[RMDB]
RNA sequence: GGGAACGACUCGAGUAGAGUCGAAAAAAGAUAUGGAGGUGAGGGAGUUGAUGUAUCUCUUGGAUUUAGUUUCGGAAACGAAACUUGUCAGAGAUAACUCAACGAAGAACUCACCUCCUAAGUCAAAUCCAUAAUCGUUGUUCGCAACGAUUAUGGAAAAAGAAACAACAACAACAAC
Reactivity to 2A3 in 0.01 (KOAc 150mM, MgCl2 10mM, bicine 150mM(pH8.5), 24C), signal-to-noise 1, nucleotides 027 to 126: a000a000g050a040u090a060u080g010g000a000g000g010u010g000a010g000g030g020a070g000u020u000g020a060u190g010u010a010u030c010u050c050u120u180g230g030a090u290u300u260a000g020u000u000u000c030g010g000a160a100a060c020g000a000a000a000c000u000u000g010u000c000a010g000a000g000a010u020a070a030c020u000c010a000a010c020g020a300a160g000a010a000c000u000c010a000c000c000u000c000c000u000a000a010g000u010c000a030a000a190
Reactivity to DMS in 0.01 (KOAc 150mM, MgCl2 10mM, bicine 150mM(pH8.5), 24C), signal-to-noise 2, nucleotides 027 to 126: a060a060g010a040u010a300u000g000g000a000g020g030u010g000a040g000g000g010a070g020u000u000g000a020u010g000u020a030u000c000u000c000u010u000g010g000a000u000u010u000a010g000u000u030u030c000g020g000a170a100a230c000g000a000a010a000c000u000u000g000u000c030a010g000a010g000a010u000a020a040c040u000c000a000a000c020g000a150a080g010a100a120c000u000c000a000c000c000u000c000c000u000a000a040g000u010c010a150a090a140

An RNA of 177 nucleotides, treated with 2A3 and DMS and read out base by base. 2A3 is a SHAPE reagent: it acylates the 2'-hydroxyl of flexible nucleotides of all four kinds. Source: RMDB library TTRDES, as collected in RNAgym. 2A3 adducts were read by reverse transcription with SuperScript II with manganese. The 2A3 profile rests on 1,926 reads.